[RMDB]
This 207-nucleotide RNA was probed chemically with 2A3 and DMS. The RNA was probed in 150 mM KOAc, 10 mM MgCl2 and 150 mM bicine (pH 8.5) at 24 C. Source: RMDB library OK3TST, as collected in RNAgym.

RNA sequence: GGGAACGACUCGAGUAGAGUCGAAAAGGCAAAAGCAGGAGCAAGAGAGAGUUGAUGAUGGGGGAUGUUGCCAUAUACUUUUAAACACCCAGAUCUCACGAGAACUCACUAUCAUGAAGAUAGCACCAAGCCGCUGAGGGACCUGCCCCCAUGAUCACGAUGUGAUAGUUUUCGAACUAUCACAUCGAAAAGAAACAACAACAACAAC
Reactivity to 2A3 in 0.01 (KOAc 150mM, MgCl2 10mM, bicine 150mM(pH8.5), 24C), signal-to-noise 3, nucleotides 027 to 156: g040g010c040a030a050a010a040g050c030a040g010g090a050g030c010a080a020g040a000g010a010g000a030g020u040u130g040a070u030g000a040u030g040g000g000g030g000a020u080g040u080u040g020c020c020a040u100a020u050a160c030u090u100u020u240a050a120a030c030a050c020c000c010a020g000a060u010c030u040c020a030c010g060a100g010a140a020c030u030c060a010c030u040a020u040c030a080u180g090a070a130g020a030u040a020g030c020a030c060c020a060a000g030c010c030g000c130u030g020a080g020g030g040a050c000c000u040g000c020c010c000c000c000a030u020g030a040u080c020a000
Reactivity to DMS in 0.01 (KOAc 150mM, MgCl2 10mM, bicine 150mM(pH8.5), 24C), signal-to-noise 3, nucleotides 027 to 156: g020g000c020a020a070a100a110g010c020a030g030g000a150g020c050a060a130g000a130g010a180g020a120g020u000u000g030a110u010g010a130u010g000g010g010g020g020a220u010g030u010u000g020c060c100a100u010a100u010a090c060u010u000u010u020a020a110a170c040a060c010c000c000a160g030a070u000c040u010c030a030c070g010a140g000a040a050c040u010c140a000c000u000a040u000c020a120u000g030a200a210g010a050u000a040g020c040a100c080c060a060a090g000c060c020g010c080u000g020a100g030g000g000a040c050c020u000g000c000c000c020c010c000a060u020g010a070u000c080a220
For DMS, 4,374 sequencing reads were counted.